[RMDB]
The data come from the RNA Mapping Database (RMDB), library OK3TST. Chemical mapping of a 207-nucleotide RNA with 2A3 and DMS. Values are in units of 0.01, from 0 to 300, in steps of 10. Values cover nucleotides 27 to 156. The RNA was probed in 150 mM KOAc, 10 mM MgCl2 and 150 mM bicine (pH 8.5) at 24 C. The DMS profile rests on 1,612 reads.

RNA sequence: GGGAACGACUCGAGUAGAGUCGAAAAUGAAAAGUGUUGAUGCUCUCUUCUUCCAUUCCUUACUCCACAAUUCCAGGCACUCAAAGGAACAAGCAAACUUAACGGAUGAAAGAGAAGUGUGUUCCUUAGAACCACAGCAUCCCCUGGCACGUGUGCGGGUCUGUUCUCUAUUCGUAGAGAACAGACCAAAAGAAACAACAACAACAAC
Reactivity to 2A3 in 0.01 (KOAc 150mM, MgCl2 10mM, bicine 150mM(pH8.5), 24C), signal-to-noise 2, nucleotides 027 to 156: u240g020a050a030a020a060g060u090g000u220u200g030a060u020g010c000u010c020u000c000u020u010c020u050u040c010c020a040u030u060c010c000u060u080a090c040u050c060c050a050c030a090a020u130u010c050c020a020g020g050c070a020c080u060c030a020a010a010g010g030a000a020c060a140a000g250c030a070a090a120c120u150u140a060a010c100g080g000a060u040g120a040a090a000g070a010g000a000a190g040u020g020u040g020u040u040c010c000u040u040a070g050a050a030c040c010a010c020a010g010c000a080u000c000c040c000c000u000g040g050c010a030c150g080u100g020u090g040c020g040
Reactivity to DMS in 0.01 (KOAc 150mM, MgCl2 10mM, bicine 150mM(pH8.5), 24C), signal-to-noise 1, nucleotides 027 to 156: u010g010a070a030a040a090g020u000g010u000u000g010a020u000g010c040u010c030u000c000u000u000c000u000u000c020c030a160u000u000c030c070u000u030a080c130u000c030c000a070c090a130a140u030u000c070c000a140g060g030c050a120c100u010c040a060a090a110g010g040a050a110c120a090a080g010c090a040a050a140c070u010u020a100a210c080g020g000a100u020g010a070a070a040g010a070g010a030a060g030u010g000u000g010u000u000c010c110u000u000a110g010a110a080c060c010a050c010a020g030c070a110u000c010c020c010c030u000g030g010c090a060c150g050u000g010u010g020c040g010